[RMDB]
Structure probing data (DMS and 2A3) for a 177-nucleotide construct. Conditions: 150 mM KOAc, 10 mM MgCl2 and 150 mM bicine (pH 8.5), 24 C. The DMS profile rests on 2,243 reads. High DMS reactivity at an A or C suggests that its Watson-Crick edge is free.
RNA sequence: GGGAACGACUCGAGUAGAGUCGAAAAUGGAAGCAGGCUGGGAGCAGAAGAAAGAAAUGCCAUGUUACUUCUCAUGUCUAUUGGCAUAUGUUUGGUGAACUAAACAAGUUAGAAUGAUGAUGGGUCAUAUGCUGUUCAUGUUCGCAUGAACAGCAUAAAAAGAAACAACAACAACAAC
Reactivity to DMS in 0.01 (KOAc 150mM, MgCl2 10mM, bicine 150mM(pH8.5), 24C), signal-to-noise 3, nucleotides 027 to 126: u000g000g010a130a080g000c060a040g020g000c080u000g030g010g010a110g020c100a040g000a080a070g000a090a050a110g010a090a120a070u010g030c020c020a040u000g000u000u020a090c060u000u000c080u000c100a050u000g000u010c050u020a090u000u010g010g010c030a060u000a110u000g000u010u000u000g010g010u010g010a080a080c040u010a010a060a050c090a060a070g010u000u000a070g010a130a030u000g000a070u020g010a070u000g000g000g010u000c060a140
Reactivity to 2A3 in 0.01 (KOAc 150mM, MgCl2 10mM, bicine 150mM(pH8.5), 24C), signal-to-noise 1, nucleotides 027 to 126: u110g010g030a000a040g000c040a000g070g040c030u040g000g010g040a060g010c030a020g020a100a020g030a010a090a000g070a040a110a040u020g000c000c000a010u070g050u090u030a060c020u110u100c020u000c080a030u110g060u000c090u060a130u120u120g000g000c000a010u020a030u070g100u040u050u000g020g000u080g090a070a020c050u070a050a000a000c010a080a040g060u050u040a040g030a060a070u110g020a030u040g030a030u010g060g000g000u000c010a000